RNA sequence: GGGAACGACUCGAGUAGAGUCGAAAACUUAGCGUCACCGGCAACGAGUGAGCGAGUGAGCGGAGGUCCAGGUUCGAACCUGCAGUAAACGACCCUUGCCGCUUGGCUUUGACUUAGGGCUCUGGUGUCACAAGUACGCGUUCGCGCGUACUUGUGAAAAAGAAACAACAACAACAAC
Reactivity to DMS in 0.01 (KOAc 150mM, MgCl2 10mM, bicine 150mM(pH8.5), 24C), signal-to-noise 3, nucleotides 027 to 126: c030u000u000a100g000c160g010u010c000a010c030c020g000g030c020a040a120c040g020a000g000u000g000a010g000c010g010a010g030u000g010a080g010c000g000g000a080g010g000u010c020c050a010g000g000u010u000c300g020a110a250c040c000u000g000c300a140g020u050a050a120a130c120g000a050c020c010c020u000u010g000c000c050g000c000u030u000g000g010c000u000u010u030g020a010c010u000u000a100g000g000g000c030u000c080u020g040g010u000g010
Reactivity to 2A3 in 0.01 (KOAc 150mM, MgCl2 10mM, bicine 150mM(pH8.5), 24C), signal-to-noise 4, nucleotides 027 to 126: c020u050u060a020g030c010g140u010c000a030c020c000g010g020c010a030a130c040g000a010g030u020g030a010g000c010g010a000g030u010g040a110g000c030g020g010a050g010g020u000c020c010a000g040g060u090u200c150g050a120a100c020c000u020g040c040a100g090u300a030a110a050c090g020a020c040c030c000u020u130g000c000c010g080c050u020u020g150g000c000u090u030u110g100a060c010u020u060a130g000g040g000c020u030c090u110g020g060u050g010
Structure probing data (DMS and 2A3) for a 177-nucleotide construct. It was measured as part of the RMDB library OK1LIB. DMS adducts were read by reverse transcription with MarathonRT. Conditions: 150 mM KOAc, 10 mM MgCl2 and 150 mM bicine (pH 8.5), 24 C.